The record gives the reactivity of an RNA of 177 nucleotides to DMS and 2A3.
The RNA was probed in 150 mM KOAc, 10 mM MgCl2 and 150 mM bicine (pH 8.5) at 24 C.
DMS adducts were read by reverse transcription with MarathonRT.

RNA sequence: GGGAACGACUCGAGUAGAGUCGAAAAGAUAUGGAACUGAACUACGCUCGAAAUUAGCUAUGAAGUCGGAAACGAUGGAGCUAAUCAAGAGCGCAGUUCCUAAGUCAAAGCAGCGUUCGCGCUGCAAGAAGAAGUAGCAGUUCGCUGCUACUUCUUCAAAAGAAACAACAACAACAAC
Reactivity to DMS in 0.01 (KOAc 150mM, MgCl2 10mM, bicine 150mM(pH8.5), 24C), signal-to-noise 3, nucleotides 027 to 126: g020a060u000a300u000g030g000a030a030c010u000g000a080a050c100u010a230c010g000c000u000c000g000a190a090a020u000u000a000g020c010u010a190u000g010a100a160g000u010c010g020g000a110a130a170c000g000a020u000g010g000a020g010c000u000a000a000u000c050a030a240g000a020g000c000g030c010a000g000u000u000c000c030u000a040a120g010u000c030a110a090a080g000c000a010g020c000g010u000u010c210g010c040g030c000u000g000c000a020a040
Reactivity to 2A3 in 0.01 (KOAc 150mM, MgCl2 10mM, bicine 150mM(pH8.5), 24C), signal-to-noise 3, nucleotides 027 to 126: g010a010u090a040u150g010g000a010a010c010u010g000a070a050c120u150a020c300g000c000u000c010g000a070a050a030u000u010a010g010c000u000a190u300g050a040a020g010u030c010g000g070a080a040a020c010g000a000u030g040g040a010g000c000u010a000a010u020c030a060a030g000a010g000c000g000c000a000g000u000u000c000c000u030a110a020g050u020c050a060a050a090g000c000a000g010c010g050u120u180c250g000c020g000c140u010g000c010a000a010